The record gives the reactivity of an RNA of 177 nucleotides to DMS.
For DMS the reverse transcriptase was MarathonRT.
RNA sequence: GGGAACGACUCGAGUAGAGUCGAAAAGUUGACUACCUAGAGGAGAAAGUACUGCAAAUAAAUCAGAGGAAGGUUGACUGGCGAGUGAUUGGCGGAUUAUUCCUAGUGACAACAACCGUCGCGGGCGAAAAGGCCCUAAGUUCGCUUAGGGCCUUUUAAAAGAAACAACAACAACAAC
Reactivity to DMS in 0.01 (KOAc 150mM, MgCl2 10mM, bicine 150mM(pH8.5), 24C), signal-to-noise 1, nucleotides 027 to 126: g000u000u000g010a090c060u010a060c050c010u000a110g000a060g030g010a060g000a100a090a070g030u000a070c040u000g000c120a080a120a130u000a050a030a030u030c070a080g020a090g000g000a110a040g000g020u010u000g000a060c010u000g010g010c020g010a050g010u010g000a030u000u000g000g000c060g020g020a100u010u010a170u000u020c020c040u010a110g000u030g020a050c060a050a050c100a080a070c080c080g010u000c020g020c070g020g010g000c130g010